Conditions: 150 mM KOAc, 10 mM MgCl2 and 150 mM bicine (pH 8.5), 24 C. The record gives the reactivity of an RNA of 177 nucleotides to 2A3. Reactivities are rounded to 0.1 and cut off at 0 and 3. It was measured as part of the RMDB library OK1LIB. Values cover nucleotides 27 to 126.
[RMDB]
RNA sequence: GGGAACGACUCGAGUAGAGUCGAAAAUUUCUGUUCUUCAAAGAAUAUAUCAUUGUCUACUUUGAUAUAUGGAAAUGGCUCUCCUUUAUAUGACCAUGAUGAAGUAUCAUUUCCACUCAUCAAUCCAAGCGGUACGAGGAUUCGUCCUCGUACCGCUAAAAGAAACAACAACAACAAC
Reactivity to 2A3 in 0.01 (KOAc 150mM, MgCl2 10mM, bicine 150mM(pH8.5), 24C), signal-to-noise 2, nucleotides 027 to 126: u000u000u000c050u070g110u250u000c080u150u150c020a050a090a080g090a220a000u050a000u000a000u100c030a100u010u070g120u080c030u150a220c020u090u010u020g020a020u060a000u000a000u000g000g060a000a030a070u040g090g000c080u000c000u040c020c060u140u070u000a060u050a040u150g170a150c080c000a170u080g060a090u020g000a000a090g070u090a120u270c090a030u000u020u060c000c080a000c000u040c000a180u040c020a000a090u130c000c040a060